[RMDB]
RNA sequence: GGGAACGACUCGAGUAGAGUCGAAAAUUGGUCAAAUGGGGCAUAAGCCUGAAACAGGUAGUGGUGGCGCAGCUUUUCCUCGGCGUAUUUAUCCCGUUUGGCAAGCUGGCGGUACUGAGUGGGCCGGACCGGAGUCAACAUUCGUGUUGACUCCGGUAAAAGAAACAACAACAACAAC
Reactivity to DMS in 0.01 (KOAc 150mM, MgCl2 10mM, bicine 150mM(pH8.5), 24C), signal-to-noise 1, nucleotides 027 to 126: u020u000g010g000u000c040a040a070a070u020g000g010g010g020c250a050u010a070a120g000c010c020u020g000a090a070a110c170a070g020g000u000a030g030u000g020g020u000g000g010c020g000c060a070g020c050u020u000u000u000c030c070u000c130g000g000c050g020u010a050u010u010u010a120u020c040c000c010g010u000u010u000g010g010c080a100a040g010c080u000g000g020c020g000g000u000a020c060u030g000a060g030u000g020g000g000c020c040g000g010